[RMDB]
RNA sequence: GGGAACGACUCGAGUAGAGUCGAAAAGUGUGCUAUACUAGUAAGGUUGAAUGAAUCAACCCUUGGUGCUUAGCUUCUUUCACCAGGCAUAUUACACGCGGAUAACCGCCAAAGGAGAAAAGAUGAACUGCCCGACGAUUCUUCGGAAUCGUCGGAAGUAGAACUUGUUCUUCGGAACAAGUUCUACAAAAGAAACAACAACAACAAC
Reactivity to DMS in 0.01 (KOAc 150mM, MgCl2 10mM, bicine 150mM(pH8.5), 24C), signal-to-noise 1, nucleotides 027 to 156: g020u020g000u010g030c040u010a110u000a150c080u010a160g020u000a130a070g020g020u000u000g000a040a180u010g000a190a120u000c020a040a100c020c000c070u000u000g010g000u010g000c030u000u020a090g010c040u010u000c020u000u000u000c030a070c040c030a060g000g050c060a110u000a050u010u000a020c090a100c150g010c020g020g000a150u020a100a080c040c000g010c020c040a040a060a140g000g000a130g000a050a040a110a120g000a120u000g020a050a100c090u000g010c070c010c000g010a020c010g000a030u000u000c010u000u010c300g060g010a020a010u010c000g040u010c000g010g000a010a010
Reactivity to 2A3 in 0.01 (KOAc 150mM, MgCl2 10mM, bicine 150mM(pH8.5), 24C), signal-to-noise 3, nucleotides 027 to 156: g020u030g010u020g020c020u050a050u050a300c080u060a060g150u120a160a080g040g020u020u000g060a100a230u120g070a090a160u050c000a000a020c010c020c000u010u070g000g000u010g020c050u040u030a050g020c000u040u030c010u030u030u040c030a030c040c000a000g000g010c050a030u040a050u120u120a060c070a040c070g010c030g000g020a090u080a240a180c020c010g030c010c070a100a040a010g060g000a030g020a030a100a020a020g080a030u160g040a100a090c020u070g030c000c010c010g000a000c000g000a000u010u000c000u010u040c160g020g000a000a000u000c000g000u000c000g000g000a010a000